[RMDB]
RNA sequence: GGGAACGACUCGAGUAGAGUCGAAAAGAAAGAAAGAAAGAAGCCGGCUCUGCUAGUUUCACGGCAACCACGUUGAAAUUACAACGAAAGAAGCUCGCACUCGACUUCAACGGCUUAACGAGUGCAAAAAAGAAGUAUCACUUCGGUGAUACUUCAACACAGAAUACACGUUCGCGUGUAUUCUGUGAAAAGAAACAACAACAACAAC
Reactivity to 2A3 in 0.01 (KOAc 150mM, MgCl2 10mM, bicine 150mM(pH8.5), 24C), signal-to-noise 1, nucleotides 027 to 156: g060a020a100a010g080a050a140a020g040a030a110a080g050a000a050g040c000c010g060g000c040u030c010u040g000c020u000a010g030u020u040u120c080a080c020g070g000c050a040a100c010c000a020c040g000u010u010g060a100a130a070u200u140a070c030a010a030c020g040a090a080a110g000a010a010g000c050u100c170g000c010a000c000u000c000g020a050c020u000u020c030a150a040c040g040g000c000u100u050a010a020c030g000a000g000u000g000c010a130a000a000a000a000a000g000a010a000g000u000a000u000c020a000c000u030u090c160g110g000u000g000a000u000a000c000u000u000c000a000a000

An RNA of 207 nucleotides, treated with 2A3 and read out base by base.
It was measured as part of the RMDB library M2RFPK.